[RMDB]
This 207-nucleotide RNA was probed chemically with DMS and 2A3.
For 2A3, 3,768 sequencing reads were counted.
The DMS profile rests on 3,579 reads.
The data come from the RNA Mapping Database (RMDB), library M2RFOK.
2A3 adducts were read by reverse transcription with SuperScript II with manganese.
RNA sequence: GGGAACGACUCGAGUAGAGUCGAAAACGCAAAGCUGCAGCGCGGCGCUCUGGAGGCCUUGCCCCGCGCACUGCUCUUUACAUGGCCCGACGUGAGGGCACUUCGCGGGCAGUGCUGCGGCCUCGUAAAACUGCCCCUAAGUUCGCUUAGGGGCAAACUGUCAUUACUUAUUCGUAAGUAAUGACAGAAAAGAAACAACAACAACAAC
Reactivity to DMS in 0.01 (KOAc 150mM, MgCl2 10mM, bicine 150mM(pH8.5), 24C), signal-to-noise 1, nucleotides 027 to 156: c030g020c040a060a040a040g010c020u000g030c030a030g030c050g030c030g000g000c070g010c090u010c010u020g010g010a230g000g000c030c160u000u010g000c050c030c000c000g030c020g030c030a090c010u000g030c000u000c030u020u020u000a090c030a160u000g030g010c030c030c020g020a160c060g010u000g010a150g010g010g000c000a010c010u000u000c020g010c280g020g010g000c020a090g020u000g000c000u010g030c030g020g000c000c030u000c060g000u000a050a050a030a070c060u000g030c010c010c040c000u000a010a040g010u010u000c300g040c020u000u000a050g030g000g010g080c000a010a000a010
Reactivity to 2A3 in 0.01 (KOAc 150mM, MgCl2 10mM, bicine 150mM(pH8.5), 24C), signal-to-noise 4, nucleotides 027 to 156: c070g010c020a060a040a010g010c010u050g020c040a050g060c030g030c030g130g000c040g010c060u060c050u100g120g040a020g020g020c010c060u080u100g020c020c000c000c020g000c000g000c010a000c020u030g000c000u010c020u040u160u160a090c050a090u120g070g000c020c000c030g080a130c100g090u140g070a140g010g000g000c030a050c030u050u050c060g010c030g020g010g000c000a010g010u010g010c020u020g000c000g000g000c000c000u010c000g000u020a020a030a040a080c090u040g000c000c020c000c000u010a000a010g000u030u100c140g030c120u000u010a000g000g000g010g010c000a000a000a000